Description
Chemical mapping of a 177-nucleotide RNA with DMS and 2A3. For 2A3, 4,349 sequencing reads were counted.
[RMDB]
RNA sequence: GGGAACGACUCGAGUAGAGUCGAAAAGGCCUCUCCCAAGCCACCUCCGCUUUCCACAGCUCCUUGCCACCUUCCGUACUUUCCCCAGAGCUGGAAGUAGGAAACUUCUCCCCUGCAGGGAUCGGAUCCCCGUAUCUUAUUUCGAUAAGAUACGGGGAAAAGAAACAACAACAACAAC
Reactivity to DMS in 0.01 (KOAc 150mM, MgCl2 10mM, bicine 150mM(pH8.5), 24C), signal-to-noise 1, nucleotides 027 to 126: g070g000c040c020u030c140u000c010c000c010a060a220g010c060c000a110c060c000u000c080c040g050c070u000u040u000c180c010a070c070a020g000c010u010c000c030u030u090g040c000c020a090c020c060u000u060c040c090g000u000a070c100u010u000u010c000c000c010c060a140g040a030g000c110u000g000g000a040a050g000u010a020g040g000a190a090a060c000u000u030c010u000c000c040c000c040u000g000c000a010g020g140g010a120u020c000g000g060a300u000
Reactivity to 2A3 in 0.01 (KOAc 150mM, MgCl2 10mM, bicine 150mM(pH8.5), 24C), signal-to-noise 3, nucleotides 027 to 126: g030g000c000c010u020c010u010c010c010c010a020a010g020c010c010a030c000c020u020c010c010g030c040u050u040u000c020c020a060c020a040g000c020u010c010c000u010u070g010c000c000a040c010c030u040u030c000c010g050u040a090c020u040u040u050c010c000c010c000a050g040a010g050c070u070g030g030a040a010g030u090a050g040g120a050a060a040c010u090u040c020u020c000c000c000c000u030g020c030a060g000g040g020a030u010c010g010g020a010u010
The RNA was probed in 150 mM KOAc, 10 mM MgCl2 and 150 mM bicine (pH 8.5) at 24 C. Values are in units of 0.01, from 0 to 300, in steps of 10.